[RMDB]
Source: RMDB library RNAMAK, as collected in RNAgym. This 207-nucleotide RNA was probed chemically with 2A3. Values cover nucleotides 27 to 156. For 2A3, 1,164 sequencing reads were counted. For 2A3 the reverse transcriptase was SuperScript II with manganese.

RNA sequence: GGGAACGACUCGAGUAGAGUCGAAAAAAAGGUACGCUGGGAGCUGGUGGAUGGGACAUGAAUCGUGCUGAAGCGCGCACGGCAUAAUUCAACAGCCCAUCGUAACAUCCAGCUCCUGUGCUGAAGCGCGCACGGCAACCGAAAGGUGCGAGAGUAAGAACUGUAGUUUCUUCGGAAACUACAGUUCAAAAGAAACAACAACAACAAC
Reactivity to 2A3 in 0.01 (KOAc 150mM, MgCl2 10mM, bicine 150mM(pH8.5), 24C), signal-to-noise 1, nucleotides 027 to 156: a000a000a000g050g000u090a020c060g020c020u010g020g000g030a030g000c000u010g000g000u010g000g010a000u010g010g020g000a040c080a180u280g010a000a010u020c040g000u000g020c010u040g000a160a050g030c000g000c010g000c030a000c020g000g000c000a010u070a010a060u070u050c050a210a080c010a150g000c000c000c000a000u000c000g030u060a100a000c030a150u140c000c010a000g000c000u000c000c000u000g010u000g000c010u010g020a050a000g020c000g000c000g010c010a000c010g010g020c010a040a060c020c000g040a010a020a050g010g010u000g050c030g000a060g000a020g150u130a190a000